[RMDB]
An RNA of 177 nucleotides, treated with DMS and read out base by base.
Reactivities are rounded to 0.1 and cut off at 0 and 3.
The reactions ran in a buffer of 150 mM KOAc, 10 mM MgCl2 and 150 mM bicine (pH 8.5), at 24 C.
RNA sequence: GGGAACGACUCGAGUAGAGUCGAAAAUGCAAUUAGUUCGCUAAUUGCACAUGUCUAGUCGCUACAAAACGAUCAAAACUAGCGACUAGACUUUAUUGAUCGGGGGCCUGGCUUUCGAGCCAGGCAAUAAGGCCUAGAGAUUCGUCUCUAGGCCUUAAAAAGAAACAACAACAACAAC
Reactivity to DMS in 0.01 (KOAc 150mM, MgCl2 10mM, bicine 150mM(pH8.5), 24C), signal-to-noise 1, nucleotides 027 to 126: u000g000c000a030a010u000u010a000g010u020u000c260g070c010u000a000a000u010u000g020c010a010c140a040u020g020u000c010u000a000g010u000c000g020c000u000a050c270a060a020a060a250c070g000a080u000c020a020a030a100a110c210u000a000g000c000g000a020c000u000a010g020a000c010u000u000u000a020u000u000g010a020u000c000g000g030g000g030g030c000c000u000g000g020c000u000u020u000c110g030a010g020c000c000a020g000g000c020a010a000